[RMDB]
RNA sequence: GGGAACGACUCGAGUAGAGUCGAAAAUAACUUGCUUAAGACCUGACUGUUUUUAAAAGCGAAUGCCAGUGAGUGAAAUGCCAGCUCCCUGUACAGUUACUAGAGCUCCUGGGAAUGCAUGGCCAGUAGUACAAAUCAUGUUCGCAUGAUUUGUACUAAAAGAAACAACAACAACAAC
Reactivity to DMS in 0.01 (KOAc 150mM, MgCl2 10mM, bicine 150mM(pH8.5), 24C), signal-to-noise 2, nucleotides 027 to 126: u020a090a030c070u000u010g040c050u000u000a070a150g000a060c070c040u010g010a070c110u000g000u000u000u000u010u000a020a110a150a120g010c040g000a060a030u000g010c080c030a040g020u010g000a090g010u000g020a070a160a090u020g000c020c030a080g000c050u000c020c000c000u000g010u000a030c140a020g010u000u000a100c130u010a090g000a130g010c050u000c060c030u010g000g000g010a070a090u000g010c010a090u000g000g020c020c150a070g020u000
Reactivity to 2A3 in 0.01 (KOAc 150mM, MgCl2 10mM, bicine 150mM(pH8.5), 24C), signal-to-noise 2, nucleotides 027 to 126: u080a010a030c020u030u090g040c010u060u070a060a030g010a070c000c000u030g030a020c030u050g190u040u040u040u070u230a110a140a030a000g040c000g000a100a030u100g030c040c000a030g020u040g010a000g030u070g010a090a070a050u090g020c000c000a020g000c010u000c000c010c020u000g020u030a080c040a040g010u040u050a070c060u110a030g060a000g140c020u040c000c000u020g000g000g000a100a050u100g010c080a090u010g020g020c020c000a040g040u040
This 177-nucleotide RNA was probed chemically with DMS and 2A3. For DMS the reverse transcriptase was MarathonRT.